This 177-nucleotide RNA was probed chemically with DMS.
It was measured as part of the RMDB library OK2TST.
The RNA was probed in 150 mM KOAc, 10 mM MgCl2 and 150 mM bicine (pH 8.5) at 24 C.

RNA sequence: GGGAACGACUCGAGUAGAGUCGAAAAAGUUUUAUCCGACUGACAAGCGCAAGCGCGUUACGGUGGAAGAAUGGCUGAUGUGGCAGAUGGGCGGGCUUGGCCCGAUGUCCGGCCAGGCUGGGCAUUACUCCGAUAUGACCUUCGGGUCAUAUCGGAGAAAAGAAACAACAACAACAAC
Reactivity to DMS in 0.01 (KOAc 150mM, MgCl2 10mM, bicine 150mM(pH8.5), 24C), signal-to-noise 1, nucleotides 027 to 126: a120g010u000u030u010u000a100u010c010c010g010a180c090u010g030a060c060a070a300g010c020g020c150a090a120g000c060g000c210g000u010u010a040c080g010g000u010g000g000a090a060g000a070a070u000g000g020c060u010g010a100u000g000u000g010g020c020a080g000a080u000g010g000g010c040g000g020g010c030u000u000g010g020c000c010c040g010a030u000g000u020c040c000g000g020c020c060a060g010g030c020u000g020g000g010c080a030u000u000a080